Conditions: 150 mM KOAc, 10 mM MgCl2 and 150 mM bicine (pH 8.5), 24 C.
This 207-nucleotide RNA was probed chemically with DMS.
For DMS, 2,717 sequencing reads were counted.
Values cover nucleotides 27 to 156.

RNA sequence: GGGAACGACUCGAGUAGAGUCGAAAAGGGGUCCAUCGUUUGACGAGGAUAAAUAGUUCGGGGACUAGCUGGAGCUAUACACUGAAGCCUCCACGGUGUAGUAGCGUUGAAAGCUAGUCCCCGAACUAUUUAUCCUCCGAGAUGGACGGAGGCACCCGAUUUGCUUAACGUUCGCGUUAAGCAAAUCAAAAGAAACAACAACAACAAC
Reactivity to DMS in 0.01 (KOAc 150mM, MgCl2 10mM, bicine 150mM(pH8.5), 24C), signal-to-noise 1, nucleotides 027 to 156: g010g010g030g000u000c000c020a010u000c000g010u010u010u010g030a200c120g020a060g040g000a010u000a020a040a030u000a020g010u000u000c040g040g010g000g020a060c030u010a020g000c010u000g030g020a250g030c000u010a010u000a020c020a030c000u020g080a060a190g000c040c030u020c040c040a300c100g010g000u010g010u020a020g070u000a010g020c000g010u000u010g000a040a130a180g000c000u010a010g000u000c020c000c000c000g000a000a000c000u000a000u000u000u000a010u000c000c000u000c000c010g000a070g020a060u000g020g010a030c040g000g000a030g000g000c040a150c010c010c090